[RMDB]
RNA sequence: GGGAACGACUCGAGUAGAGUCGAAAAAGCGGAGCCAAGAUACAAAGACUCAGCGAUUCGCUGACAGAGGAGAACUCGAAUGCCUCCAGCGAUAUGGGGGCAGGGACGCCCACCACGCCCACAACGGGCCUAAGUUUACGUUCGCGUAAACUUAGGCAAAAGAAACAACAACAACAAC
Reactivity to 2A3 in 0.01 (KOAc 150mM, MgCl2 10mM, bicine 150mM(pH8.5), 24C), signal-to-noise 2, nucleotides 027 to 126: a000g000c020g010g010a020g030c010c020a030a060g080a070u150a160c090a040a180a020g080a110c030u000c010a020g000c050g300a300u250u190c050g000c010u010g010a000c030a070g030a050g040g030a070g050a150a080c000u010c040g040a130a030u060g020c000c000u000c020c010a010g000c060g150a000u020a070u220g010g000g000g050g070c000a000g020g010g000a040c050g000c000c020c000a030c010c010a000c050g050c020c030c000a020c000a030a040c050g020g150
Reactivity to DMS in 0.01 (KOAc 150mM, MgCl2 10mM, bicine 150mM(pH8.5), 24C), signal-to-noise 2, nucleotides 027 to 126: a060g020c050g000g010a080g000c030c040a040a000g000a110u000a050c210a120a120a120g000a040c110u000c040a030g040c020g040a200u030u000c020g030c000u000g020a090c180a100g010a040g010g000a110g000a040a110c060u020c100g000a100a080u000g000c010c010u000c000c000a040g000c060g040a080u020a040u000g000g000g000g000g000c000a000g010g010g020a110c110g020c050c020c000a060c080c040a140c110g020c010c000c000a140c100a010a050c070g000g000
Notes:
This 177-nucleotide RNA was probed chemically with 2A3 and DMS. For 2A3, 1,281 sequencing reads were counted. The data come from the RNA Mapping Database (RMDB), library OK2TRN.